This 207-nucleotide RNA was probed chemically with 2A3. 2A3 adducts were read by reverse transcription with SuperScript II with manganese.
[RMDB]
RNA sequence: GGGAACGACUCGAGUAGAGUCGAAAAGUUGUUCGUGGCACCCAGCUCUGUGUCGACUCACACGGAAUCGUCGGGUCUUAUGUGUUUGGAUAAGACUUGACUAAACUUAACAAACUCGCUUAAUGUGAUCCCUGCUGGCCGGGCAGCAUUAAGUUAAGUACAACAGUCUGUUCGCAGACUGUUGUACAAAAGAAACAACAACAACAAC
Reactivity to 2A3 in 0.01 (KOAc 150mM, MgCl2 10mM, bicine 150mM(pH8.5), 24C), signal-to-noise 2, nucleotides 027 to 156: g030u030u030g040u030u060c050g020u030g000g050c030a060c000c010c010a010g020c010u040c050u090g120u060g090u090c040g070a080c030u080c090a100c020a020c060g000g050a060a080u010c030g000u000c000g010g000g010u010c000u010u000a020u050g100u030g000u020u010u070g020g020a000u000a000a000g000a000c000u010u020g020a000c000u040a020a030a000c040u170u290a060a000c020a030a000a000c060u050c060g010c000u020u020a010a010u010g050u080g080a240u140c020c000c020u040g000c040u080g170g010c150c050g000g000g000c000a010g000c000a000u030u000a000a000g000u000u090a100a010
Values are in units of 0.01, from 0 to 300, in steps of 10.